[RMDB]
RNA sequence: GGGAACGACUCGAGUAGAGUCGAAAAGGGAGACCCGAGCAGAGGCAUAGCGAACUGCGCACGGCGAAGCCUUGAGGGAAGGCCGUAGGACCCGGGUUCGAUUCCCGGCUGCUCCACCGAAGGGCCACGCGUAUGAUAUAUUCGUAUAUCAUACGCGAAAAGAAACAACAACAACAAC
Reactivity to 2A3 in 0.01 (KOAc 150mM, MgCl2 10mM, bicine 150mM(pH8.5), 24C), signal-to-noise 5, nucleotides 027 to 126: g070g020g010a100g030a050c000c010c020g020a030g000c030a010g010a040g080g000c060a090u160a070g050c050g060a080a050c040u060g020c030g010c030a030c040g050g000c020g050a050a020g030c010c000u050u070g050a090g010g020g030a040a050g030g000c020c020g040u050a050g030g060a070c010c010c000g010g000g000u040u050c040g030a050u050u070c000c000c000g000g000c010u040g000c010u020c000c000a050c000c020g050a050a050g030g000g000c000c000a010
Reactivity to DMS in 0.01 (KOAc 150mM, MgCl2 10mM, bicine 150mM(pH8.5), 24C), signal-to-noise 9, nucleotides 027 to 126: g000g010g000a110g020a150c110c010c030g010a120g020c080a050g000a070g010g010c050a090u020a150g010c060g010a130a100c050u010g000c070g010c100a130c080g020g000c040g000a110a230g010c000c000u000u010g010a210g010g010g000a090a080g000g000c020c030g010u010a090g010g000a140c150c030c000g000g000g010u000u020c170g000a300u040u020c010c010c000g000g000c140u020g000c050u010c030c020a160c070c050g000a140a110g000g000g000c000c080a170
Record summary:
Structure probing data (2A3 and DMS) for a 177-nucleotide construct. For 2A3, 23,855 sequencing reads were counted. The RNA was probed in 150 mM KOAc, 10 mM MgCl2 and 150 mM bicine (pH 8.5) at 24 C. DMS adducts were read by reverse transcription with MarathonRT. The DMS profile rests on 23,365 reads.